[RMDB]
The record gives the reactivity of an RNA of 177 nucleotides to DMS and 2A3.
The RNA was probed in 150 mM KOAc, 10 mM MgCl2 and 150 mM bicine (pH 8.5) at 24 C.
The DMS profile rests on 4,729 reads.
2A3 adducts were read by reverse transcription with SuperScript II with manganese.
RNA sequence: GGGAACGACUCGAGUAGAGUCGAAAACGGGCGUAGAUCUGGAGACAGAUUUAGCGCGCUGAUCGCUGCGCCUAGGUGUUAUCCCUAGGGUGUUAGGCAGUGGAUCUGUGACAGCCGGAAGGGAUGACCGCGUAUCUAGCUUCGGCUGGAUACGCGGAAAAGAAACAACAACAACAAC
Reactivity to DMS in 0.01 (KOAc 150mM, MgCl2 10mM, bicine 150mM(pH8.5), 24C), signal-to-noise 2, nucleotides 027 to 126: c060g040g010g000c000g030u000a030g000a000u000c020u020g000g000a290g000a200c020a020g000a020u000u000u000a070g020c040g000c030g040c030u030g000a030u000c000g000c000u000g000c010g000c000c000u000a000g000g030u010g030u040u020a060u040c150c000c000u000a050g000g010g030u020g000u040u030a150g010g000c010a070g010u010g000g000a040u010c010u010g000u020g010a080c110a090g000c000c000g000g000a120a060g000g000g010a110u000g000a230
Reactivity to 2A3 in 0.01 (KOAc 150mM, MgCl2 10mM, bicine 150mM(pH8.5), 24C), signal-to-noise 4, nucleotides 027 to 126: c010g030g060g010c020g060u060a020g010a000u020c000u000g030g000a050g030a060c000a000g010a010u020u020u050a100g100c050g000c000g010c040u030g010a020u010c010g000c010u010g000c030g130c020c010u030a020g020g020u030g090u250u190a080u120c000c020c000u000a000g030g040g010u110g150u150u130a120g070g000c000a000g000u030g160g010a000u000c020u010g010u030g010a070c070a030g050c040c000g000g030a080a030g060g000g010a070u070g000a010